RNA sequence: GGGAACGACUCGAGUAGAGUCGAAAACCGCAUCCCGCACGGGAGGCGCAGCUGCUGCAUGACGCUUUAACGUCGCAGCUCACCACCGCCUGACCAUUCUGCCAGGAGACAACGGUUGCCCACUCUUCAAGAAGUAACAAUUCGUUGUUACUUCUUGAAAAGAAACAACAACAACAAC
Reactivity to DMS in 0.01 (KOAc 150mM, MgCl2 10mM, bicine 150mM(pH8.5), 24C), signal-to-noise 8, nucleotides 027 to 126: c030c010g010c150a160u010c020c010c180g000c120a110c230g010g010g000a040g000g020c010g020c120a090g010c120u010g000c020u000g030c030a140u030g010a020c020g020c110u010u020u030a160a210c020g020u000c010g030c010a020g000c000u000c060a070c140c060a100c180c020g000c020c010u000g010a110c040c050a100u010u010c100u010g000c060c050a070g000g000a060g010a070c100a090a120c040g000g000u000u000g010c010c000c010a190c040u000c040u010u000
Reactivity to 2A3 in 0.01 (KOAc 150mM, MgCl2 10mM, bicine 150mM(pH8.5), 24C), signal-to-noise 9, nucleotides 027 to 126: c000c000g000c020a070u040c010c010c010g030c040a050c090g010g010g010a020g010g010c020g000c020a040g020c030u070g000c000u010g010c020a130u270g010a010c010g050c040u180u120u240a170a030c010g000u000c010g000c010a000g000c010u020c020a070c020c010a020c010c010g010c000c000u090g050a170c010c010a060u120u050c020u060g020c020c030a050g020g040a070g030a040c040a090a030c070g020g000u020u030g030c010c000c000a030c010u060c010u000u000
Structure probing data (DMS and 2A3) for a 177-nucleotide construct. Reactivities are given for positions 27 through 126. Reactivities are rounded to 0.1 and cut off at 0 and 3.